[RMDB]
RNA sequence: GGGAACGACUCGAGUAGAGUCGAAAACUCUUCGAUGGAGUUUGACCAAUUCAUUGAAGAGCGGUUUGGCCGUAACUUGAACCUGGCACAUGCCAAUAAUGCCAAGCUCGCGGUUCGGAGGCGGAUUGCUGGCUCAUUGACUUGCAAUGGUGAGCUCGUGGAGCUUUAUUUUCGAAUAAAGCUCCACAAAAGAAACAACAACAACAAC
Reactivity to 2A3 in 0.01 (KOAc 150mM, MgCl2 10mM, bicine 150mM(pH8.5), 24C), signal-to-noise 3, nucleotides 027 to 156: c000u000c000u010u020c010g030a020u020g040g010a020g090u030u050u260g080a020c030c010a030a140u010u000c000a000u020u010g000a000a010g010a020g020c040g010g040u060u110u150g080g000c010c010g020u040a090a090c040u030u110g050a030a040c010c020u010g010g010c020a070c080a230u220g020c020c030a090a100u230a110a080u080g000c020c000a060a020g030c060u070c070g030c110g010g000u050u060c050g010g060a060g010g030c070g000g030a060u100u120g040c040u060g050g000c010u050c040a030u060u060g080a080c060u080u130g050c040a070a130u090g030g000u000g020a010g010c050u000c160
Reactivity to DMS in 0.01 (KOAc 150mM, MgCl2 10mM, bicine 150mM(pH8.5), 24C), signal-to-noise 1, nucleotides 027 to 156: c000u000c000u000u000c010g010a080u000g020g000a010g050u000u010u000g010a180c240c110a120a170u000u000c000a060u010u010g010a070a020g030a040g040c000g070g000u000u000u000g040g020c050c020g010u010a040a050c060u010u000g010a040a010c030c010u010g060g010c010a060c040a110u000g020c210c160a090a110u020a080a020u010g000c000c010a020a120g010c010u000c040g060c050g040g000u030u000c000g000g020a120g010g000c050g000g000a150u000u010g010c000u000g000g010c010u070c010a050u000u030g030a100c060u010u000g040c060a110a080u000g020g050u000g010a050g030c010u000c090